[RMDB]
RNA sequence: GGGAACGACUCGAGUAGAGUCGAAAAGGCGCGGUGGCUUACGCCUGUAAUCCCAGUACUUUGGGAGGCCAAGGCAGGCAGAUCACAAGGUCAGGAGAUUGAGACCACCCUGGCUAACACGGUAAAACCGUAUUACCACCUUCGGGUGGUAAUACGGAAAAGAAACAACAACAACAAC
Reactivity to 2A3 in 0.01 (KOAc 150mM, MgCl2 10mM, bicine 150mM(pH8.5), 24C), signal-to-noise 1, nucleotides 027 to 126: g000g010c040g010c020g060g050u030g030g020c070u080u050a020c050g020c000c010u000g040u040a040a020u000c010c010c000a010g080u270a120c100u090u190u050g030g000g000a040g050g030c070c100a020a030g070g010c010a010g030g030c030a010g040a110u060c030a050c080a170a020g060g020u000c000a010g000g000a120g060a120u120u140g030a020g080a110c000c000a000c040c010c010u010g010g050c030u000a100a030c100a020c060g040g040u100a060a060a010a060
Reactivity to DMS in 0.01 (KOAc 150mM, MgCl2 10mM, bicine 150mM(pH8.5), 24C), signal-to-noise 1, nucleotides 027 to 126: g000g000c030g040c190g000g010u020g040g000c060u000u010a090c080g010c000c020u020g040u000a060a090u000c050c000c000a100g020u000a140c110u010u030u000g010g000g040a060g000g000c040c070a090a040g000g040c020a070g010g000c010a100g010a040u020c050a020c080a110a100g000g000u000c000a020g000g000a030g000a080u000u000g000a120g000a050c080c080a070c070c010c010u030g000g000c050u030a060a100c050a050c060g000g040u000a070a080a100a200
An RNA of 177 nucleotides, treated with 2A3 and DMS and read out base by base. Conditions: 150 mM KOAc, 10 mM MgCl2 and 150 mM bicine (pH 8.5), 24 C. The 2A3 profile rests on 1,167 reads. Reactivities are given for positions 27 through 126. Source: RMDB library OK2TRN, as collected in RNAgym.